Chemical mapping of a 177-nucleotide RNA with 2A3 and DMS. For DMS, 11,440 sequencing reads were counted. Conditions: 150 mM KOAc, 10 mM MgCl2 and 150 mM bicine (pH 8.5), 24 C. It was measured as part of the RMDB library M2PK50. DMS adducts were read by reverse transcription with MarathonRT.

RNA sequence: GGGAACGACUCGAGUAGAGUCGAAAAUUUUGAGCUUUCGAGCUCAAAACAACUGGUGUCCCGAGCAGGAAAAACAGAUUUACACGAAGUGAAAGAUCGAAAGGGCCACCAUGUUCGCAUGGUGGAAGGUAAUUGUAUGUUUCGACAUACAAUUACCAAAAGAAACAACAACAACAAC
Reactivity to 2A3 in 0.01 (KOAc 150mM, MgCl2 10mM, bicine 150mM(pH8.5), 24C), signal-to-noise 6, nucleotides 027 to 126: u020u010u000u010g000a010g000c010u050u050u190c250g080a000g000c000u000c000a000a000a000a000c010a020a060c050u090g090g020u080g090u040c000c000c000g010a040g030c040a040g030g120a060a070a050a040a010c030a040g050a040u070u120u100a040c080a020c110g190a290a030g020u030g070a120a050a030g050a040u060c040g040a090a050a060g060g030g020c000c000a000c010c000a000u010g010u010u050c200g000c070a000u010g000g010u000g010g020a040a010
Reactivity to DMS in 0.01 (KOAc 150mM, MgCl2 10mM, bicine 150mM(pH8.5), 24C), signal-to-noise 8, nucleotides 027 to 126: u000u000u000u000g000a010g000c000u000u000u020c180g020a020g010c000u000c000a000a000a020a030c150a110a100c090u000g010g010u010g000u000c000c000c020g010a160g020c100a080g010g000a050a060a060a080a060c130a100g010a060u000u000u000a190c060a050c050g010a100a100g020u010g010a050a080a130g000a030u000c020g000a060a100a100g010g000g000c010c000a010c000c000a000u000g000u000u010c170g010c000a010u000g000g010u000g000g000a030a010